[RMDB]
RNA sequence: GGGAACGACUCGAGUAGAGUCGAAAAGAUAUGGAUCCGAGGUGGGAGCAGUUAUCGGAAACGAUAAUACUGCAUCGAUCACCGCGGAUCCUAAGUCAAAACCUGCACUUCUUCGGAAGUGCAGGAACAUGUAAAGGUGGUUCGCCACCUUUACAUGAAAAGAAACAACAACAACAAC
Reactivity to DMS in 0.01 (KOAc 150mM, MgCl2 10mM, bicine 150mM(pH8.5), 24C), signal-to-noise 7, nucleotides 027 to 126: g000a030u000a170u010g000g000a010u000c000c000g000a020g000g030u000g010g020g020a200g020c010a010g010u000u000a010u000c000g020g000a040a030a110c010g010a010u000a010a120u010a060c010u000g010c010a270u010c300g000a120u000c000a010c000c000g000c000g000g000a000u000c000c000u000a000a050g000u000c020a160a060a120a180c010c000u000g000c010a010c000u000u000c000u000u020c260g020g000a020a010g010u000g000c010a000g000g000a020a040
Reactivity to 2A3 in 0.01 (KOAc 150mM, MgCl2 10mM, bicine 150mM(pH8.5), 24C), signal-to-noise 6, nucleotides 027 to 126: g000a010u030a010u060g000g000a000u000c000c010g010a040g030g020u030g010g200g140a130g000c000a000g010u010u010a000u000c010g010g010a030a010a010c010g010a000u020a050a100u200a160c020u010g000c010a060u300c200g200a220u090c000a000c010c010g030c000g010g000a000u000c000c000u000a000a000g000u000c010a000a020a100a240c000c000u010g000c010a010c000u010u000c000u040u080c260g190g000a000a000g000u010g000c000a000g000g000a000a010